This 177-nucleotide RNA was probed chemically with 2A3. The 2A3 profile rests on 551 reads. The data come from the RNA Mapping Database (RMDB), library OK1LIB. Values cover nucleotides 27 to 126. The RNA was probed in 150 mM KOAc, 10 mM MgCl2 and 150 mM bicine (pH 8.5) at 24 C.
RNA sequence: GGGAACGACUCGAGUAGAGUCGAAAACGCGUAACGCAAGACCACGCAGACGACUACCUGGAGACUGUCCUCCGGGAGAGCGAUUAUUCGAAAAAUCAUAAGCGGAAGACGGUCAACACGCUCCAAACGUGCAUGCCGAGUUCGCUCGGCAUGCACGAAAAGAAACAACAACAACAAC
Reactivity to 2A3 in 0.01 (KOAc 150mM, MgCl2 10mM, bicine 150mM(pH8.5), 24C), signal-to-noise 2, nucleotides 027 to 126: c100g070c030g000u080a070a100c000g060c090a060a060g000a020c000c000a050c000g010c000a100g010a170c180g030a010c110u080a130c000c000u010g110g000a070g000a000c060u100g050u140c000c000u000c050c030g010g090g000a040g010a000g040c030g000a030u200u050a130u040u290c100g050a130a000a000a050a240u060c120a150u050a210a110g000c000g000g030a000a000g070a100c040g000g000u000c000a040a200c050a000c000g000c080u040c000c050a070a070a070